An RNA of 177 nucleotides, treated with 2A3 and DMS and read out base by base. The data come from the RNA Mapping Database (RMDB), library OK2TRN. The DMS profile rests on 4,218 reads. DMS adducts were read by reverse transcription with MarathonRT. For 2A3, 3,509 sequencing reads were counted.
RNA sequence: GGGAACGACUCGAGUAGAGUCGAAAACAAUACCACGCACUGGCUCCCGAAGAGGCCGGCUCCUUCCUCUAUGACGGCAGGAUUGCGCACCGCCUGGCUGUUCACGCUCACCUUCUCCGCCCCGGCGGGGAGAAACAUCUUUCGAGAUGUUUCUCCCAAAAGAAACAACAACAACAAC
Reactivity to 2A3 in 0.01 (KOAc 150mM, MgCl2 10mM, bicine 150mM(pH8.5), 24C), signal-to-noise 2, nucleotides 027 to 126: c010a020a040u090a180c020c020a000c060g020c010a030c060u040g040g020c040u020c000c010c000g030a070a020g070a030g080g010c050c020g020g040c030u040c000c000u050u030c030c020u030c020u100a140u250g100a030c050g020g000c010a000g040g050a090u060u190g050c070g000c040a050c020c010g030c000c000u030g040g020c010u030g050u090u080c050a040c060g020c000u040c010a080c010c000u040u030c020u020c020c010g030c010c010c000c010g030g000c040g000
Reactivity to DMS in 0.01 (KOAc 150mM, MgCl2 10mM, bicine 150mM(pH8.5), 24C), signal-to-noise 4, nucleotides 027 to 126: c090a100a120u000a110c040c030a090c090g000c050a100c060u000g010g010c040u000c030c010c030g010a100a130g020a090g010g000c070c040g010g000c040u010c020c010u010u000c010c020u010c060u000a070u010g010a090c110g010g020c070a060g010g000a070u000u000g010c050g010c030a090c050c070g000c030c030u000g000g020c040u000g010u000u000c050a090c080g010c050u000c050a060c050c030u000u000c020u000c020c030g000c030c010c030c040g000g020c130g010